[RMDB]
RNA sequence: GGGAACGACUCGAGUAGAGUCGAAAAUCCAGGGGCGGUGGCUGCUUGUAGCCAUGGGAUCUCCAACUGCAUGCCAGAGUAAUGGGGAGGCUUUGACAGCCCAGGUCAUCACAGUGCCUGCAGCUGCAAUUUAGAGCCUUUUCGAAGGCUCUAAAUUAAAAGAAACAACAACAACAAC
Reactivity to DMS in 0.01 (KOAc 150mM, MgCl2 10mM, bicine 150mM(pH8.5), 24C), signal-to-noise 6, nucleotides 027 to 126: u020c000c000a140g020g010g010g020c040g020g030u000g000g020c020u000g010c150u020u020g010u020a040g000c040c050a080u020g000g030g010a110u010c030u010c020c020a080a150c040u000g000c050a070u000g000c080c040a080g010a150g020u010a090a070u010g000g000g000g000a120g000g000c070u000u010u020g000a120c110a060g000c010c230c030a090g000g000u010c030a070u010c080a100c140a110g000u020g000c020c020u000g020c120a070g010c040u010g010c130
Reactivity to 2A3 in 0.01 (KOAc 150mM, MgCl2 10mM, bicine 150mM(pH8.5), 24C), signal-to-noise 6, nucleotides 027 to 126: u030c010c010a020g030g000g030g020c030g030g000u030g010g010c010u020g020c030u090u160g120u170a020g020c000c030a020u050g030g030g030a110u040c030u010c020c000a050a080c010u060g000c040a090u100g040c050c000a040g020a010g060u180a160a070u070g010g000g010g020a060g040g000c050u060u060u110g070a060c060a020g000c020c010c000a010g040g040u040c020a030u100c030a080c040a080g050u050g110c000c000u020g000c010a010g000c010u040g010c020